[RMDB]
RNA sequence: GGGAACGACUCGAGUAGAGUCGAAAACGAAGGCCUCUGUUGCCACAGCGAGUGCCUGGGCAACUGUUCUCAGCCCGACGACCCCACCAAGUGCGUGGCCUGCCGCAACUUCUACCUGGACGGCAGGGCAAAAAGUUCAGUUCGCUGAACUUUUUGCAAAAGAAACAACAACAACAAC
Reactivity to 2A3 in 0.01 (KOAc 150mM, MgCl2 10mM, bicine 150mM(pH8.5), 24C), signal-to-noise 2, nucleotides 027 to 126: c060g020a080a040g040g000c030c030u080c060u080g000u030u020g010c010c020a300c020a150g000c030g140a180g290u190g050c070c040u010g000g000g000c000a040a030c050u070g150u290u060c060u040c050a020g010c040c030c000g070a100c050g060a020c030c030c000c010a040c020c030a220a070g150u060g180c060g010u020g070g000c000c000u010g000c000c000g010c000a040a060c040u200u040c040u060a110c030c010u030g000g030a000c000g000g020c010a000g000g000
Reactivity to DMS in 0.01 (KOAc 150mM, MgCl2 10mM, bicine 150mM(pH8.5), 24C), signal-to-noise 4, nucleotides 027 to 126: c060g020a220a110g000g000c040c040u020c030u000g010u000u010g020c020c010a070c040a070g000c070g020a140g020u020g010c100c010u000g010g000g000c000a020a050c030u000g000u000u000c060u000c100a180g010c020c000c010g010a210c130g000a170c050c010c010c030a060c070c090a110a150g010u010g020c100g010u000g010g000c000c010u000g000c000c010g010c070a100a080c110u000u020c090u010a100c060c090u000g000g000a140c020g000g000c010a010g000g000